[RMDB]
RNA sequence: GGGAACGACUCGAGUAGAGUCGAAAAAAUACGAGCGUAAUCGCGUCUUGACGUGAGUGGGCCUAGACUGUAGGCUAUAUAGCCCAAGUGUGCAUAGCGCACAAUACGCAGAUCUACAGUCAUUGAAUACAGAGCAUCAGUUCGCUGAUGCUCUGUAAAAAGAAACAACAACAACAAC
Reactivity to DMS in 0.01 (KOAc 150mM, MgCl2 10mM, bicine 150mM(pH8.5), 24C), signal-to-noise 2, nucleotides 027 to 126: a060a050u000a060c190g020a170g000c010g000u000a070a100u010c010g020c000g010u000c040u000u000g000a030c010g010u000g010a050g000u000g000g000g010c030c110u000a120g010a010c000u000g010u010a000g010g000c090u000a080u010a050u010a100g000c010c000c020a030a230g000u000g000u000g000c000a160u020a170g010c110g010c020a000c010a020a080u000a010c000g030c000a060g000a050u000c000u000a000c000a000g010u010c000a100u000u000g020a100a120
Reactivity to 2A3 in 0.01 (KOAc 150mM, MgCl2 10mM, bicine 150mM(pH8.5), 24C), signal-to-noise 1, nucleotides 027 to 126: a000a000u280a040c120g000a030g010c000g010u010a000a040u020c000g000c000g040u010c030u070u230g160a010c000g000u000g000a020g030u020g000g010g000c020c020u000a020g000a010c000u000g010u000a000g020g000c040u010a010u010a020u040a290g010c000c000c000a060a040g030u000g000u030g030c080a190u150a180g030c010g000c040a020c000a010a010u020a010c020g000c000a000g000a080u020c000u010a000c000a000g000u020c000a040u090u210g060a050a030
An RNA of 177 nucleotides, treated with DMS and 2A3 and read out base by base. Reactivities are given for positions 27 through 126. Source: RMDB library M2PK90, as collected in RNAgym. DMS adducts were read by reverse transcription with MarathonRT.